[RMDB]
RNA sequence: GGGAACGACUCGAGUAGAGUCGAAAAUUCGCAAGUCAUGUUGCCAACUUCCAAAAAUCAGGUUAUAGUAAAUAUGUCACUGUUCAGGGACCACCUGGCACUGGCAAAAGUCAUUUUGCUAUAGGGUUAAUCUGUUGGUUCGCCAACAGAAAAAGAAACAACAACAACAAC
Reactivity to 2A3 in 0.01 (KOAc 150mM, MgCl2 10mM, bicine 150mM(pH8.5), 24C), signal-to-noise 6, nucleotides 027 to 129: u090u030c030g010c040a030a000g020u090c030a050u110g070u110u030g030c000c010a030a030c040u050u050c010c000a050a070a020a030a060u140c060a030g070g020u060u030a010u020a010g040u040a010a020a040u110a060u080g010u000c010a000c020u020g020u300u300c020a020g070g040g190a300c090c010a170c030c030u000g000g000c010a000c020u000g000g000c000a020a030a060a020g100u050c060a090u010u030u020u010g000c000u000a010u020a030g080g000g040u040u070a070a080
Reactivity to DMS in 0.01 (KOAc 150mM, MgCl2 10mM, bicine 150mM(pH8.5), 24C), signal-to-noise 7, nucleotides 027 to 129: u030u060c200g040c060a080a040g030u000c060a050u000g010u030u060g000c030c050a110a070c100u000u000c040c000a040a060a110a100a070u050c120a080g020g050u030u020a030u000a000g000u020a010a020a020u030a100u000g030u020c040a040c100u000g030u040u050c000a060g000g000g000a210c190c120a110c000c030u000g000g030c040a050c120u000g000g090c030a010a040a050a050g000u030c110a080u050u000u010u010g000c010u030a030u000a050g000g000g000u000u000a050a150
An RNA of 170 nucleotides, treated with 2A3 and DMS and read out base by base. Values are in units of 0.01, from 0 to 300, in steps of 10. Source: RMDB library 15KLIB, as collected in RNAgym. The reactions ran in a buffer of 150 mM KOAc, 10 mM MgCl2 and 150 mM bicine (pH 8.5), at 24 C. DMS adducts were read by reverse transcription with MarathonRT.